Background
This 177-nucleotide RNA was probed chemically with 2A3 and DMS.

RNA sequence: GGGAACGACUCGAGUAGAGUCGAAAAUGAUCGCGCUCCCCACCGGAAAGUCCAUUCAGAUCACCGCGCCGGGCGCAUCCGGGCGGAACCGCCUGAAGUACAUCGACGGCCUGACCAUCGACCGCCAGUACCUGGACUAUUUCGAUAGUCCAGGUACAAAAGAAACAACAACAACAAC
Reactivity to 2A3 in 0.01 (KOAc 150mM, MgCl2 10mM, bicine 150mM(pH8.5), 24C), signal-to-noise 3, nucleotides 027 to 126: u150g000a030u070c030g000c010g000c040u040c000c000c000c000a030c000c020g010g010a150a050a020g040u010c050c010a050u030u090c010a020g030a080u070c020a020c090c000g010c030g060c020c000g010g030g010c120g000c030a030u020c010c000g010g010g010c020g000g050a040a060c030c030g020c010c010u030g040a060a000g030u050a050c020a120u060c070g040a040c010g040g010c000c000u050g020a070c000c030a040u050c030g030a020c000c030g000c020c000a030
Reactivity to DMS in 0.01 (KOAc 150mM, MgCl2 10mM, bicine 150mM(pH8.5), 24C), signal-to-noise 2, nucleotides 027 to 126: u000g010a000u020c050g000c020g000c050u000c000c020c060c010a070c060c080g050g000a150a100a020g000u000c070c180a060u020u000c010a080g000a060u000c080a220c000c020g000c050g000c040c010g010g020g010c180g010c240a000u030c030c000g000g000g000c000g010g000a050a060c070c070g000c090c000u010g000a050a080g000u010a040c110a130u000c050g000a070c050g020g030c030c020u030g000a120c010c000a090u010c080g010a190c020c030g020c000c080a100